The record gives the reactivity of an RNA of 177 nucleotides to 2A3 and DMS. For DMS the reverse transcriptase was MarathonRT. Values are in units of 0.01, from 0 to 300, in steps of 10. For 2A3 the reverse transcriptase was SuperScript II with manganese. The data come from the RNA Mapping Database (RMDB), library OK1LIB. Conditions: 150 mM KOAc, 10 mM MgCl2 and 150 mM bicine (pH 8.5), 24 C.

RNA sequence: GGGAACGACUCGAGUAGAGUCGAAAAACAUGCGGAAGGCAGUGUGCUAGCAAAACUGGCCUCACCCUACAUCAAAAGAAGAUGCACGGUAUGAAGGUAGAGCGCGCUGUUACCAGCCAACGCGGCGCGAGGCUUGACAGUUCGCUGUCAAGCCUCGAAAAGAAACAACAACAACAAC
Reactivity to 2A3 in 0.01 (KOAc 150mM, MgCl2 10mM, bicine 150mM(pH8.5), 24C), signal-to-noise 3, nucleotides 027 to 126: a000c040a110u200g050c020g060g030a100a030g160g000c000a000g040u050g000u020g030c000u050a080g070c100a050a120a120a060c070u100g120g020c010c040u000c000a020c000c000c040u030a020c000a000u020c020a000a170a150a110g170a150a030g010a000u000g060c010a000c110g050g000u120a140u200g030a150a040g010g000u020a030g030a040g080c000g000c000g000c000u000g020u030u030a030c020c000a000g000c020c010a040a020c110g020c070g080g050c070g000
Reactivity to DMS in 0.01 (KOAc 150mM, MgCl2 10mM, bicine 150mM(pH8.5), 24C), signal-to-noise 2, nucleotides 027 to 126: a020c030a120u120g000c000g010g000a060a060g000g000c000a010g070u000g050u000g000c010u020a190g020c170a080a050a010a300c010u050g000g020c000c000u000c050a050c110c000c020u000a090c050a030u010c000a120a020a050a040g050a170a050g010a010u000g000c060a000c300g000g000u000a240u110g000a100a090g030g100u000a060g000a080g020c060g050c010g030c000u020g000u000u000a140c110c060a120g000c010c020a090a120c150g000c040g010g000c090g000